[RMDB]
RNA sequence: GGGAACGACUCGAGUAGAGUCGAAAAUGGUGGGCACCUGUAGUCCCAGCUACUGGAGGCUGAGGCAGGAGAAUGGCGUGAACCCAGGAGGCGGAGGUUGCAGUGAGCCGAGAUCAUGCCACUGCACCUCCCAGCCGUUGUUCGCAACGGCUGGGAGAAAAGAAACAACAACAACAAC
Reactivity to 2A3 in 0.01 (KOAc 150mM, MgCl2 10mM, bicine 150mM(pH8.5), 24C), signal-to-noise 2, nucleotides 027 to 126: u070g020g020u030g010g020g000c030a040c040c020u010g080u090a020g020u050c000c010c000a000g060c020u060a060c020u050g100g020a050g020g070c050u050g030a080g040g050c030a070g000g110a020g070a060a060u080g040g000c000g040u070g080a060a050c030c040c020a010g030g030a020g000g060c050g000g020a030g080g000u110u140g010c010a020g000u010g030a040g060c020c010g100a070g020a070u160c120a020u140g020c000c010a000c010u010g000c040a030c000
Reactivity to DMS in 0.01 (KOAc 150mM, MgCl2 10mM, bicine 150mM(pH8.5), 24C), signal-to-noise 4, nucleotides 027 to 126: u010g010g020u010g010g010g020c070a120c020c010u000g020u010a070g010u000c040c010c010a080g000c050u010a040c080u000g020g010a100g010g020c030u010g010a130g000g020c030a060g010g010a080g000a070a070u010g020g000c080g030u010g000a080a120c040c020c040a140g020g020a090g000g040c100g010g000a060g010g000u000u000g020c020a000g000u010g010a110g030c010c130g000a150g010a110u000c150a120u010g010c020c010a020c010u000g000c030a030c070